Chemical mapping of a 207-nucleotide RNA with 2A3 and DMS.
For DMS, 6,450 sequencing reads were counted.
For 2A3, 8,850 sequencing reads were counted.
The RNA was probed in 150 mM KOAc, 10 mM MgCl2 and 150 mM bicine (pH 8.5) at 24 C.
2A3 adducts were read by reverse transcription with SuperScript II with manganese.
DMS adducts were read by reverse transcription with MarathonRT.
Reactivities are given for positions 27 through 156.
RNA sequence: GGGAACGACUCGAGUAGAGUCGAAAAUACCGUAUUUCGAUACGGUAACUACUCCUAAGUCAGCGUCGUUUGACGGACAUGCACCACGGUCGGAAACGACCGGAGUGCAACAGCCCGAGACGCUGAUAUGGAAUGCAGAGUGCAUUCGUGCACUCAAUGCAAAAAUAUUGUUCGCAAUAUUUUUGCAAAAAGAAACAACAACAACAAC
Reactivity to 2A3 in 0.01 (KOAc 150mM, MgCl2 10mM, bicine 150mM(pH8.5), 24C), signal-to-noise 5, nucleotides 027 to 156: u040a000c010c000g000u000a010u010u190u120c220g080a020u000a000c000g010g000u010a020a000c020u090a040c030u020c010c000u040a160a020g010u010c000a000g000c000g010u000c030g030u090u230u300g160a100c020g000g000a030c020a070u030g000c000a000c000c020a030c020g000g000u000c000g010g030a110a090a070c010g000a000c000c020g000g000a030g000u000g000c000a010a020c020a020g020c010c000c000g030a040g000a010c000g010c000u000g000a000u000a000u010g010g020a040a020u120g070c090a030g020a010g020u010g000c000a020u030u140c270g070u070g000c000a030c010u000c000a020a050
Reactivity to DMS in 0.01 (KOAc 150mM, MgCl2 10mM, bicine 150mM(pH8.5), 24C), signal-to-noise 3, nucleotides 027 to 156: u000a010c000c010g020u000a000u000u000u000c200g010a030u000a010c000g020g010u000a010a070c080u000a090c040u000c000c020u000a110a300g030u000c020a010g030c000g030u000c010g040u000u020u010g010a150c050g020g000a030c020a300u000g010c010a020c000c070a230c020g010g000u000c000g000g020a190a180a300c010g010a010c010c000g000g000a030g050u010g000c020a010a020c030a080g000c000c000c010g000a240g020a020c000g000c010u000g000a010u000a160u000g000g000a080a050u010g010c020a110g000a040g020u000g030c010a130u000u010c220g060u000g030c000a020c000u000c010a050a100